An RNA of 177 nucleotides, treated with DMS and read out base by base. The DMS profile rests on 592 reads. The reactions ran in a buffer of 150 mM KOAc, 10 mM MgCl2 and 150 mM bicine (pH 8.5), at 24 C.
RNA sequence: GGGAACGACUCGAGUAGAGUCGAAAACGAACGGACUGAAGUGAGGGAGGCAGGGGUCCUCUCUAAGAGAAAGGUGGACCAGAUGACAAGAAAGCCCACCCACAGGAGGGCUUAUCCAUUCAGUCAGCAUUCAAGCCUCCUUCGGGAGGCUUGAAUGAAAAGAAACAACAACAACAAC
Reactivity to DMS in 0.01 (KOAc 150mM, MgCl2 10mM, bicine 150mM(pH8.5), 24C), signal-to-noise 1, nucleotides 027 to 126: c060g040a080a120c140g000g000a000c020u000g050a100a060g000u000g070a050g000g020g000a060g000g000c010a060g020g010g000g010u000c010c020u000c040u020c030u010a060a040g010a190g010a050a010a060g000g030u010g020g020a090c020c060a140g050a150u000g020a120c150a120a220g000a110a060a000g050c020c000c010a150c010c050c300a080c300a120g000g000a000g020g000g000c000u000u020a020u000c020c020a150u000u000c080a020g000u010c030a160g060